[RMDB]
RNA sequence: GGGAACGACUCGAGUAGAGUCGAAAAGGAUUCCCCGUGGAGGGAGACAGCCACCGGGAUAGGACAGAGAAAUCACCUCCAGAGGACCCCUUCAGCGAACAUGAAGCGCACUGAGCCGCCAGGAUGAUAACAGUCCCGUUCGCGGGACUGAAAAGAAACAACAACAACAAC
Reactivity to 2A3 in 0.01 (KOAc 150mM, MgCl2 10mM, bicine 150mM(pH8.5), 24C), signal-to-noise 3, nucleotides 027 to 129: g140g000a110u060u110c000c000c000c000g050u060g010g010a050g010g020g000a010g000a010c030a020g060c010c010a020c020c040g040g000g050a030u080a070g050g030a040c100a040g070a000g050a050a070a030u070c020a040c030c000u020c010c020a020g030a050g050g010a080c020c020c000c000u020u040c020a020g040c000g010a020a010c000a080u120g070a020a000g050c040g000c040a030c070u110g010a000g020c000c000g000c000c000a030g010g010a010u100g010a030u130a060a000
Reactivity to DMS in 0.01 (KOAc 150mM, MgCl2 10mM, bicine 150mM(pH8.5), 24C), signal-to-noise 7, nucleotides 027 to 129: g030g020a220u020u000c010c010c000c040g060u060g050g040a070g030g020g020a120g040a070c090a140g040c000c100a080c040c100g010g030g040a060u060a080g000g040a090c130a140g040a110g040a020a030a050u050c100a130c130c030u030c060c040a040g040a060g020g000a090c140c030c030c060u010u060c040a040g010c000g020a000a000c060a160u020g050a050a080g020c300g040c030a060c090u030g040a100g050c000c080g030c080c060a000g010g010a080u040g010a000u060a080a070